Description
Chemical mapping of a 207-nucleotide RNA with 2A3 and DMS. The data come from the RNA Mapping Database (RMDB), library M2RFPK. The 2A3 profile rests on 1,281 reads. Conditions: 150 mM KOAc, 10 mM MgCl2 and 150 mM bicine (pH 8.5), 24 C.
RNA sequence: GGGAACGACUCGAGUAGAGUCGAAAACGUAAAGGGCGAGCUUUUCUCCGGAAUGGUUCCGCCGUGAUCGGGCCAUGCAAUAGUUGCCAACGACAACUAUGCUCCGGUUGCUCAGGCAGCGUAACGCACAAUGGAACAACCUUCGGGUUGUUCCAAAACAAGCCAUUAUCUUCGGAUAAUGGCUUGUAAAAGAAACAACAACAACAAC
Reactivity to 2A3 in 0.01 (KOAc 150mM, MgCl2 10mM, bicine 150mM(pH8.5), 24C), signal-to-noise 2, nucleotides 027 to 156: c000g020u080a030a090a110g090g080g000c040g010a080g010c050u060u080u080u070c040u020c050c040g040g000a010a050u050g030g000u200u150c030c000g020c000c020g010u040g030a120u110c010g000g000g010c010c040a040u060g000c000a040a300u010a050g000u010u010g010c050c040a170a050c130g070a090c010a000a000c020u010a030u040g020c000u000c000c000g010g010u050u060g010c020u000c060a030g050g000c000a010g080c040g060u130a120a060c100g020c040a020c030a100a230u050g010g000a000a000c010a000a000c000c000u060u060c220g000g000g000u000u000g000u000u000c000c000a000a000a000
Reactivity to DMS in 0.01 (KOAc 150mM, MgCl2 10mM, bicine 150mM(pH8.5), 24C), signal-to-noise 2, nucleotides 027 to 156: c060g000u000a120a120a140g000g000g010c000g020a050g030c030u000u000u010u000c020u000c050c050g000g000a070a000u010g030g000u000u010c060c010g030c060c070g030u010g030a070u010c030g010g030g000c000c030a070u000g050c090a070a070u000a030g020u000u000g030c020c010a200a120c230g010a070c000a000a020c000u010a050u000g020c050u010c020c040g010g030u010u000g000c010u020c070a130g010g010c010a100g010c020g000u020a050a080c110g000c040a090c070a130a210u010g010g010a010a010c010a020a010c000c010u000u010c300g050g010g020u000u000g020u000u010c000c000a000a000a050